Chemical mapping of a 177-nucleotide RNA with 2A3. The RNA was probed in 150 mM KOAc, 10 mM MgCl2 and 150 mM bicine (pH 8.5) at 24 C.
RNA sequence: GGGAACGACUCGAGUAGAGUCGAAAAAAUGGUAACUGGAAUACAGCCACAACCGUGAAUCAAUCGUAGCGGACUAACACUUUCAUUUCACAAAUCUCCAAAUACCAAACACACUCGCCCGUAGCAGGUGAAACCGCUCAUUCGUGAGCGGUUUCACAAAAGAAACAACAACAACAAC
Reactivity to 2A3 in 0.01 (KOAc 150mM, MgCl2 10mM, bicine 150mM(pH8.5), 24C), signal-to-noise 2, nucleotides 027 to 126: a000a000u090g050g120u050a030a000c020u070g000g000a010a050u240a070c040a080g050c050c040a020c010a000a160c050c000g030u080g030a030a020u090c190a100a050u080c140g030u030a000g000c000g030g040a090c110u070a060a010c120a000c080u080u140u150c020a100u000u050u060c050a080c030a000a060a000u040c020u000c000c000a150a000a000u090a000c020c000a080a000a000c050a000c000a000c130u040c090g080c000c000c000g000u060a020g100c090a010g030

For 2A3 the reverse transcriptase was SuperScript II with manganese.